[RMDB]
RNA sequence: GGGAACGACUCGAGUAGAGUCGAAAACGAUCUGUUCGCAGAUCGAGCUACGGAGACGUAGCAAAGCGAGCGAGGGCACGGGCGCUCGCACUACCGGAACUCAAACCAUAUCCACGUGUGCUAGGAUAUGGCCGUGCCCACAGCAACAGCACACGAAGCACUAAUGCCUAUUCGUAGGCAUUAGUGCAAAAGAAACAACAACAACAAC
Reactivity to 2A3 in 0.01 (KOAc 150mM, MgCl2 10mM, bicine 150mM(pH8.5), 24C), signal-to-noise 2, nucleotides 027 to 156: c000g000a000u000c000u020g020u070u080c240g020c090a000g000a000u000c000g000a030g010c010u020a020c020g030g010a090g000a020c030g000u010a010g030c020a000a100a000g010c010g000a000g000c000g000a020g010g000g000c010a000c000g000g010g030c020g040c000u010c000g070c010a010c000u090a090c000c030g100g120a100a040c040u090c190a110a050a110c000c000a000u000a010u000c010c030a050c150g010u020g000u010g000c000u010a020g000g000a000u000a000u010g020g000c000c000g010u000g000c030c000c020a090c010a010g090c010a010a100c020a030g000c000a010c010a000c030g080a060a020
An RNA of 207 nucleotides, treated with 2A3 and read out base by base. The RNA was probed in 150 mM KOAc, 10 mM MgCl2 and 150 mM bicine (pH 8.5) at 24 C. Values are in units of 0.01, from 0 to 300, in steps of 10. For 2A3 the reverse transcriptase was SuperScript II with manganese.